This 177-nucleotide RNA was probed chemically with DMS.
Source: RMDB library TTRDEL, as collected in RNAgym.

RNA sequence: GGGAACGACUCGAGUAGAGUCGAAAAGAUAUGGAAUACUCUCGAUAAGCUGACGGUCGGAAACGACCGCAGCUUUUGACGAGAGUUCCUAAGUCAAAACCCAUUCUCUGUUCGCAGAGAAUGGGAACGUCAUACACCUGUUCGCAGGUGUAUGACGAAAAGAAACAACAACAACAAC
Reactivity to DMS in 0.01 (KOAc 150mM, MgCl2 10mM, bicine 150mM(pH8.5), 24C), signal-to-noise 1, nucleotides 027 to 126: g020a010u000a300u010g000g000a010a050u000a080c020u000c000u020c000g020a140u000a040a010g040c030u000g000a090c000g010g030u010c000g000g010a070a070a150c010g010a020c000c000g000c010a000g010c000u000u010u000u000g010a140c070g000a010g010a020g010u000u000c000c000u020a070a120g000u000c010a080a040a120a210c010c000c010a040u000u000c000u000c010u000g030u000u010c220g000c000a000g000a020g000a010a000u000g020g010g010a010a010

DMS adducts were read by reverse transcription with MarathonRT. The reactions ran in a buffer of 150 mM KOAc, 10 mM MgCl2 and 150 mM bicine (pH 8.5), at 24 C.